[RMDB]
RNA sequence: GGGAACGACUCGAGUAGAGUCGAAAAGAUUCAACUGACUUCAUAGCCCUCAUUAUGGCUUAUGGCAAUUGCACAUUUGGUGCUCCAGAUGAUGCCUCUCGGUUACUUCAUACCGUGCUUGCAAAGGCCUUACUGACGUGUUCGCACGUCAGUAAGGAAAAGAAACAACAACAACAAC
Reactivity to DMS in 0.01 (KOAc 150mM, MgCl2 10mM, bicine 150mM(pH8.5), 24C), signal-to-noise 2, nucleotides 027 to 126: g020a080u000u000c040a060a130c070u000g030a130c130u000u000c040a030u000a050g030c040c000c180u000c300a130u000u010a020u000g010g000c000u000u010a030u010g000g010c200a050a050u020u020g030c010a030c030a110u010u000u010g000g010u000g000c090u010c130c020a020g010a060u010g000a110u000g000c010c010u000c040u010c030g010g000u000u020a050c140u000u000c120a070u010a000c000c020g020u010g020c150u000u000g000c090a060a080a040g040g030
Reactivity to 2A3 in 0.01 (KOAc 150mM, MgCl2 10mM, bicine 150mM(pH8.5), 24C), signal-to-noise 2, nucleotides 027 to 126: g000a020u070u010c020a000a030c060u070g040a010c040u030u020c100a040u010a020g000c010c040c010u060c080a170u070u220a080u210g030g000c000u110u120a060u070g010g000c060a000a110u080u030g020c000a000c010a070u110u120u120g140g000u080g040c000u040c000c010a010g000a060u010g020a020u050g010c000c000u020c020u020c010g040g000u070u050a060c020u150u130c010a020u030a090c000c020g030u010g040c060u060u050g000c030a110a060a030g080g020